[RMDB]
RNA sequence: GGGAACGACUCGAGUAGAGUCGAAAAGUAGGUUGCCAUGGGUCAAGGUCAAGCUGAUUUAGCAAUUCAAAUGCUAAAAGAAUGUGCCCGCAAUGGAGACUGGCUCUGUUUGAAGAACUUACAUCUUGUGGUAUCUUGGCUGCCAGUUCUGGAAAAGGGUCGUUAUGGUAUUCGUACCAUAACGACCAAAAGAAACAACAACAACAAC
Reactivity to 2A3 in 0.01 (KOAc 150mM, MgCl2 10mM, bicine 150mM(pH8.5), 24C), signal-to-noise 2, nucleotides 027 to 156: g080u110a000g000g200u070u100g040c010c000a020u050g000g010g030u080c050a070a050g130g010u020c060a060a090g030c050u000g080a190u000u030u000a000g000c000a000a000u270u000c030a200a190a160u090g010c000u010a000a000a000a080g040a040a130u100g010u050g080c000c000c030g050c030a000a050u030g000g030a020g020a080c040u020g000g000c030u000c060u080g160u030u100u170g180a050a040g000a030a020c050u130u120a010c090a060u210c110u220u090g020u050g060g020u070a110u170c040u020u030g010g000c030u050g000c030c020a020g020u110u010c090u090g030g100a060a100a050a070g090
Reactivity to DMS in 0.01 (KOAc 150mM, MgCl2 10mM, bicine 150mM(pH8.5), 24C), signal-to-noise 1, nucleotides 027 to 156: g040u000a090g010g020u000u020g000c010c020a090u010g060g010g010u010c070a060a040g030g000u000c080a100a070g100c020u000g020a200u000u010u010a020g000c020a100a170u000u010c300a120a120a220u010g010c000u020a000a010a080a130g010a130a020u000g010u000g000c120c020c000g010c080a070a060u040g000g020a150g010a090c110u000g010g020c030u040c030u000g000u010u000u000g020a120a050g000a070a070c020u000u010a030c010a110u010c040u020u030g040u000g010g000u000a050u000c060u000u000g010g020c030u000g030c020c010a000g030u000u000c010u000g000g000a050a100a060a280g010